[RMDB]
RNA sequence: GGGAACGACUCGAGUAGAGUCGAAAAGAUAUGGAUCCCUUGAGGUGGACAUGACCGCGGAUCGGAAACGAUCCGAUGGUCAACAGCCACUGGGAUCCUAAGUCAAACUGCAUCUUCGGAUGCAGAAGAAUGUGGAUGGGUUCGCCCAUCCACAUUCAAAAGAAACAACAACAACAAC
Reactivity to 2A3 in 0.01 (KOAc 150mM, MgCl2 10mM, bicine 150mM(pH8.5), 24C), signal-to-noise 1, nucleotides 027 to 126: g000a000u030a000u040g000g000a000u020c000c000c000u040u300g230a060g000g020u040g000g060a110c230a300u300g010a000c020c000g000c000g010g000a010u010c000g010g010a000a020a020c000g020a000u000c020c020g000a070u040g000g020u010c000a010a020c020a010g030c000c010a010c010u000g000g000g000a000u000c030c000u000a000a000g020u010c010a000a100a170c010u030g000c000a000u000c010u050u070c200g170g000a000u000g000c000a010g010a020a030
Reactivity to DMS in 0.01 (KOAc 150mM, MgCl2 10mM, bicine 150mM(pH8.5), 24C), signal-to-noise 1, nucleotides 027 to 126: g010a010u010a060u010g000g000a010u000c000c000c000u020u000g050a190g010g030u000g010g010a000c060a300u060g010a000c020c020g020c000g000g000a010u050c000g000g040a010a000a040c010g010a010u000c000c010g050a020u000g030g030u010c000a060a050c100a260g000c010c000a010c000u000g020g000g040a010u000c000c000u000a000a100g000u000c010a120a130a300c000u000g020c000a010u000c000u000u000c230g040g000a000u000g000c000a000g020a090a100
This 177-nucleotide RNA was probed chemically with 2A3 and DMS. The RNA was probed in 150 mM KOAc, 10 mM MgCl2 and 150 mM bicine (pH 8.5) at 24 C. The data come from the RNA Mapping Database (RMDB), library TTRDES. 2A3 adducts were read by reverse transcription with SuperScript II with manganese. The 2A3 profile rests on 2,603 reads.